[RMDB]
RNA sequence: GGGAACGACUCGAGUAGAGUCGAAAAAUACACCAGCAGUAGGACUCAGCGACCGUCACAACAAGGUUGCGCUGGUAUCCGACGGUCGUAUAGCCCUGUCUUGCAGGUUGCCUUGCACUGACGUGCCACACCAUUUACAGAUUCGUCUGUAAAUGAACCUUUAUACCACCUUCGGGUGGUAUAAAGGAAAAGAAACAACAACAACAAC
Reactivity to 2A3 in 0.01 (KOAc 150mM, MgCl2 10mM, bicine 150mM(pH8.5), 24C), signal-to-noise 4, nucleotides 027 to 156: a000u100a010c070a010c020c000a000g000c010a010g010u080a010g020g000a030c040u050c160a030g010c000g000a000c000c010g020u020c020a040c030a160a160c040a210a100g050g020u120u110g050c050g060c060u050g040g010u020a080u060c030c060g000a000c000g000g000u000c010g020u100a090u140a150g010c000c000c000u020g020u060c040u070u140g000c020a020g040g000u040u050g020c000c020u030u070g000c000a010c030u140g080a060c120g020u020g050c040c010a110c010a050c030c000a000u000u000u030a000c000a000g020a020u020u120c170g080u010c070u000g000u000a000a000a000u000g000a010a000
Reactivity to DMS in 0.01 (KOAc 150mM, MgCl2 10mM, bicine 150mM(pH8.5), 24C), signal-to-noise 2, nucleotides 027 to 156: a070u000a060c100a160c020c020a110g010c030a060g000u010a020g050g000a040c030u010c120a220g020c000g030a020c010c000g010u000c040a260c110a100a120c060a050a070g000g010u000u000g010c160g010c010u010g020g000u010a070u000c100c020g020a020c030g000g030u000c060g010u000a190u000a040g000c000c020c010u010g000u000c040u000u000g010c010a100g020g020u010u000g130c000c110u000u000g020c030a080c010u010g000a160c210g020u000g020c060c050a110c070a160c090c010a000u000u000u000a000c000a000g000a070u000u010c300g000u000c010u000g010u000a000a010a010u000g000a070a120